This 207-nucleotide RNA was probed chemically with 2A3 and DMS. The data come from the RNA Mapping Database (RMDB), library OK3TST. For 2A3 the reverse transcriptase was SuperScript II with manganese. The RNA was probed in 150 mM KOAc, 10 mM MgCl2 and 150 mM bicine (pH 8.5) at 24 C. For DMS, 3,079 sequencing reads were counted.

RNA sequence: GGGAACGACUCGAGUAGAGUCGAAAAUGACGAUAUGCCUGAUUCGGACGCGGCAGACCGGGCGCAGGUACGGUCGCUAGUGAUGUUGCACGACACACGCAAGAUUUCCGACUACGGGUACCUCAAAACCUACUCGAUCUCCAGAGGUUUUGGCGUGAUGCUAUAAAUCCUUCGGGAUUUAUAGCAUAAAAGAAACAACAACAACAAC
Reactivity to 2A3 in 0.01 (KOAc 150mM, MgCl2 10mM, bicine 150mM(pH8.5), 24C), signal-to-noise 2, nucleotides 027 to 156: u120g030a020c100g020a050u060a100u250g000c000c000u040g010a060u030u000c000g000g040a030c050g020c000g090g000c100a050g010a010c020c000g040g090g000c120g040c060a070g040g060u130a050c020g020g010u030c000g030c020u050a050g020u040g020a230u060g030u020u080g080c070a020c110g170a000c020a000c000a000c080g070c010a020a080g030a190u030u040u020c000c020g010a010c000u130a110c080g000g000g000u000a030c000c040u110c060a040a050a010a020c010c000u060a170c010u050c090g080a150u050c060u060c090c040a010g020a090g070g000u040u020u030u040g010g010c010g040u060g040
Reactivity to DMS in 0.01 (KOAc 150mM, MgCl2 10mM, bicine 150mM(pH8.5), 24C), signal-to-noise 2, nucleotides 027 to 156: u000g000a110c060g010a110u000a060u000g030c000c000u000g020a210u000u000c010g020g020a120c110g030c100g030g030c040a100g010a040c010c010g000g000g000c050g020c200a020g020g040u010a040c010g030g050u010c010g010c050u000a030g050u000g040a140u000g000u010u010g000c060a110c100g000a140c110a110c040a020c040g010c050a080a150g000a170u010u000u000c010c040g020a060c030u000a160c060g000g020g010u000a050c040c020u010c050a050a070a020a080c010c000u000a060c030u000c030g000a100u000c070u000c050c020a130g020a040g000g000u000u000u000u000g010g030c070g030u000g010